An RNA of 177 nucleotides, treated with 2A3 and DMS and read out base by base. For DMS, 1,540 sequencing reads were counted. The reactions ran in a buffer of 150 mM KOAc, 10 mM MgCl2 and 150 mM bicine (pH 8.5), at 24 C. The data come from the RNA Mapping Database (RMDB), libraries RFM100 and RFMREP.
RNA sequence: GGGAACGACUCGAGUAGAGUCGAAAACCUACACCGUUAGAUCGAGAAAUGGACGUUCGAGAUUCGUCCACGUCACCAUGAGUUAAAAUUUAACUCUCAGUAAAUUUUAACUCAUGAGUGAAUCUGCCUCACUCACUCCAUUCGUGGAGUGAGUGAGAAAAGAAACAACAACAACAAC
Reactivity to 2A3 in 0.01 (KOAc 150mM, MgCl2 10mM, bicine 150mM(pH8.5), 24C), signal-to-noise 4, nucleotides 027 to 126: c000c000u050a070c100a060c070c050g160u140u150a070g020a270u130c080g060a040g080a130a060a120u090g000g010a010c020g000u050u090c170g160a060g020a300u120u090c000g010u020c010c020a020c050g030u000c000a000c000c000a000u000g000a000g000u000u000a000a000a000a000u000u000u010a110a130c030u060c010u040c120a020g010u020a000a000a000u000u010u000u000a000a000c000u030c000a000u000g010a000g010u000g000a000a020u000c020u050g070c000
Reactivity to DMS in 0.01 (KOAc 150mM, MgCl2 10mM, bicine 150mM(pH8.5), 24C), signal-to-noise 1, nucleotides 027 to 126: c000c020u000a210c130a090c090c060g000u040u030a020g020a230u020c050g000a140g030a050a100a200u000g000g000a050c070g000u000u020c200g010a170g000a120u010u000c000g000u000c000c000a010c250g000u000c010a030c020c020a000u030g000a000g000u000u000a000a000a000a000u000u000u000a030a080c030u000c070u050c100a100g000u000a000a030a000u000u000u000u000a000a000c000u000c000a000u000g000a060g000u000g000a040a050u030c020u000g000c300